[RMDB]
RNA sequence: GGGAACGACUCGAGUAGAGUCGAAAAACGGUCACAUACGUAUGACCGAAUGAGCAUAACAGGGCCACCCCAAAGCGUUCACAUUGUGGCCCCUGUCAGAUUCUGGUAAAUCUGCGAGUUCUGCUAAAUUAGGUAACUCUCUUCGGAGAGUUACCAACUAUAUAACAGGCUUCGGCCUGUUAUAUAGAAAAGAAACAACAACAACAAC
Reactivity to 2A3 in 0.01 (KOAc 150mM, MgCl2 10mM, bicine 150mM(pH8.5), 24C), signal-to-noise 4, nucleotides 027 to 156: a010c010g000g000u000c010a020c000a080u300a110c110g110u220a090u070g000a000c000c000g010a020a080u120g020a010g000c010a040u010a090a010c030a030g000g010g010c010c000a020c020c010c010c030a090a090a050g110c110g090u230u230c060a060c050a230u090u140g010u000g000g000c030c000c000c010u040g020u040c000a000g000a050u060u020c020u230g100g000u070a040a040a020u000c010u010g030c050g030a040g040u040u040c040u020g020c020u040a050a120a150u190u140a090g010g000u000a000a000c000u000c000u000c000u040u050c110g020g000a000g000a000g000u000u000a000c000c000a000a000
Reactivity to DMS in 0.01 (KOAc 150mM, MgCl2 10mM, bicine 150mM(pH8.5), 24C), signal-to-noise 2, nucleotides 027 to 156: a150c040g020g020u000c000a020c030a140u000a130c220g040u000a050u000g010a000c020c000g000a040a080u010g000a100g030c040a080u010a060a070c040a020g020g020g030c000c020a050c020c030c030c040a090a100a160g030c040g010u000u010c060a080c070a110u020u000g000u000g000g020c000c020c020c010u000g010u000c020a020g000a060u000u010c030u000g000g010u000a060a030a020u000c000u000g020c030g020a140g010u000u000c080u010g000c020u000a050a070a170u010u000a090g000g010u000a010a010c010u000c000u010c000u010u010c300g070g020a030g010a060g020u000u000a000c000c000a000a020
The record gives the reactivity of an RNA of 207 nucleotides to 2A3 and DMS. The data come from the RNA Mapping Database (RMDB), library M2RFPK. High DMS reactivity at an A or C suggests that its Watson-Crick edge is free. 2A3 adducts were read by reverse transcription with SuperScript II with manganese. Reactivities are given for positions 27 through 156. For DMS the reverse transcriptase was MarathonRT.